[RMDB]
Chemical mapping of a 177-nucleotide RNA with 2A3 and DMS.
For 2A3 the reverse transcriptase was SuperScript II with manganese.
Conditions: 150 mM KOAc, 10 mM MgCl2 and 150 mM bicine (pH 8.5), 24 C.
For 2A3, 725 sequencing reads were counted.
DMS (dimethyl sulfate) methylates the pairing face of unpaired adenines and cytosines.
The data come from the RNA Mapping Database (RMDB), library OK2TST.
For DMS, 3,180 sequencing reads were counted.
RNA sequence: GGGAACGACUCGAGUAGAGUCGAAAAUAUUGUCUUCCACCUAUGAACAUGGGCAAACUUUGUGUAAAUGGUCAGAUUGUAAGUAUUUCGGGCUGUGUGGGCACAGUGUCUCUGUCACAGCUACGCGCAAACCUAGACGGUUCGCCGUCUAGGUUUGAAAAGAAACAACAACAACAAC
Reactivity to 2A3 in 0.01 (KOAc 150mM, MgCl2 10mM, bicine 150mM(pH8.5), 24C), signal-to-noise 1, nucleotides 027 to 126: u090a060u000u110g010u020c050u050u000c030c010a050c000c030u080a060u130g020a160a010c030a140u070g030g040g000c030a070a020a140c030u100u140u060g020u040g000u060a020a070a070u120g040g000u020c010a050g090a270u080u080g130u180a010a230g030u020a100u060u170u120c090g050g000g000c050u020g000u010g020u090g030g040g000c100a040c090a100g050u050g070u040c000u000c030u130g100u010c020a000c060a000g000c050u090a130c040g010c000g070
Reactivity to DMS in 0.01 (KOAc 150mM, MgCl2 10mM, bicine 150mM(pH8.5), 24C), signal-to-noise 3, nucleotides 027 to 126: u000a060u010u010g010u010c060u010u010c030c070a090c050c020u000a080u000g010a110a070c060a040u000g010g010g020c100a080a080a090c060u000u010u000g010u000g010u010a050a070a130u010g000g010u000c080a050g010a080u010u010g000u000a050a080g020u010a080u000u010u000c020g020g000g000c020u000g020u000g020u020g000g000g000c080a100c190a100g020u000g000u010c040u000c040u000g010u010c010a020c050a020g000c010u000a020c110g010c300g010